[RMDB]
RNA sequence: GGGAACGACUCGAGUAGAGUCGAAAAGAGUGACGGAGUCAGGUCAUCUGGCCGCAUCUCAACUGACUAGCACGCUGUAGGGACAACCUGUGAGAACAAAGCAAGUGCAUGCUGCUAAGCACGUACGCGCCAUCUUAGGGUUCGCCCUAAGAUGGCGAAAAGAAACAACAACAACAAC
Reactivity to 2A3 in 0.01 (KOAc 150mM, MgCl2 10mM, bicine 150mM(pH8.5), 24C), signal-to-noise 2, nucleotides 027 to 126: g010a010g000u070g000a110c030g010g010a040g050u070c020a010g040g000u070c040a140u070c070u040g020g050c000c050g070c030a090u060c010u000c090a060a080c030u050g020a050c020u010a030g030c060a000c030g050c030u040g010u080a040g020g030g030a070c030a020a040c030c000u040g010u060g090a090g030a120a040c070a110a080a000g060c030a060a130g020u000g090c010a000u070g000c000u050g000c020u100a150a000g000c010a010c070g020u080a010c050g000
Reactivity to DMS in 0.01 (KOAc 150mM, MgCl2 10mM, bicine 150mM(pH8.5), 24C), signal-to-noise 2, nucleotides 027 to 126: g000a110g020u010g010a100c030g010g040a040g010u000c030a020g000g000u000c120a090u000c020u010g000g020c150c080g030c100a050u000c020u020c030a090a150c080u010g000a080c040u000a080g030c070a050c070g000c040u000g000u020a070g010g020g000a090c200a040a070c030c030u000g000u000g010a110g020a080a050c100a020a090a090g000c070a040a170g020u000g010c020a070u000g000c020u000g010c140u000a060a060g030c030a010c040g010u000a090c150g030